[RMDB]
RNA sequence: GGGAACGACUCGAGUAGAGUCGAAAAGUUACCUUCGGGUAACAGAGUGCCGUAGGCGUGUAUUACUCAGAUAUUGUCAGUAAGGCUUCGAAAGAGGCCACUUGGAUUUAUAUCCGAACUUACACGCCUAAACGGAAGAGAUAGCCUUCGGGCUAAAGCAGCAUAAUAAUUUCGAUUAUUAUGCUGCAAAAGAAACAACAACAACAAC
Reactivity to DMS in 0.01 (KOAc 150mM, MgCl2 10mM, bicine 150mM(pH8.5), 24C), signal-to-noise 2, nucleotides 027 to 156: g040u000u000a010c010c000u000u010c300g060g000g000u000a010a010c000a070g000a190g000u000g020c040c000g020u000a060g010g020c000g040u010g010u000a010u020u000a080c100u000c000a040g010a060u000a020u000u000g020u000c000a060g000u000a100a160g040g040c010u010u000c000g010a190a110a300g010a020g010g030c000c000a010c030u000u000g020g010a040u000u000u000a010u000a020u010c000c010g000a060a150c080u000u000a010c020a010c020g030c000c010u000a010a010a090c040g000g020a080a100g000a190g000a170u000a020g010c000c000u000u000c200g050g010g020c000u000a000a060a180
Reactivity to 2A3 in 0.01 (KOAc 150mM, MgCl2 10mM, bicine 150mM(pH8.5), 24C), signal-to-noise 6, nucleotides 027 to 156: g000u010u000a000c000c000u020u060c300g110g000g000u010a000a010c010a010g160a030g030u150g030c010c010g010u020a020g010g000c010g000u010g010u000a020u030u070a100c050u000c020a010g010a010u010a000u020u040g020u020c010a000g030u080a270a120g010g000c000u000u000c000g080a080a090a040g000a000g020g000c010c010a010c030u050u090g090g000a030u200u300u080a030u060a000u010c010c020g000a010a000c000u010u010a000c000a000c010g000c010c000u000a010a000a000c000g020g010a060a020g050a010g030a060u070a030g000c020c010u060u080c300g050g020g000c020u040a040a020a020